[RMDB]
RNA sequence: GGGAACGACUCGAGUAGAGUCGAAAAGUGCGGAUCAUAUACCCUCGCGAUGAGGUGACCUUGAUCGCCGUGACCUUGGAGUGUGUGGUGCUGAUGUGUGAACUGUCUCGGGAGGAUGCCCCUGUGCCUCCACCUCCUGAUUCGUCAGGAGGUGGAGAAAAGAAACAACAACAACAAC
Reactivity to DMS in 0.01 (KOAc 150mM, MgCl2 10mM, bicine 150mM(pH8.5), 24C), signal-to-noise 3, nucleotides 027 to 126: g040u020g030c030g010g010a050u000c010a070u000a130u010a190c150c010c000u030c020g000c160g020a130u000g000a050g010g000u000g000a280c170c170u010u000g010a030u000c040g030c040c030g000u000g000a120c100c020u010u000g010g000a110g000u000g000u020g010u010g020g030u000g000c040u000g010a040u010g020u010g000u000g000a070a110c090u000g000u010c030u000c110g020g000g000a050g000g000a090u020g010c010c010c020c030u020g000u000g010c090
Reactivity to 2A3 in 0.01 (KOAc 150mM, MgCl2 10mM, bicine 150mM(pH8.5), 24C), signal-to-noise 1, nucleotides 027 to 126: g080u080g000c040g050g080a030u040c040a000u110a000u030a080c010c000c040u020c020g220c080g190a180u300g060a000g000g000u030g000a030c000c090u010u040g000a010u090c000g050c040c000g020u030g050a100c030c010u030u110g100g010a070g010u040g000u040g020u030g020g000u060g000c000u050g010a160u070g030u040g030u040g130a030a040c060u040g000u060c020u040c000g030g030g000a020g010g000a000u040g030c010c000c000c020u090g000u100g050c010
Chemical mapping of a 177-nucleotide RNA with DMS and 2A3. For 2A3 the reverse transcriptase was SuperScript II with manganese. For DMS, 2,601 sequencing reads were counted. The reactions ran in a buffer of 150 mM KOAc, 10 mM MgCl2 and 150 mM bicine (pH 8.5), at 24 C. Values cover nucleotides 27 to 126.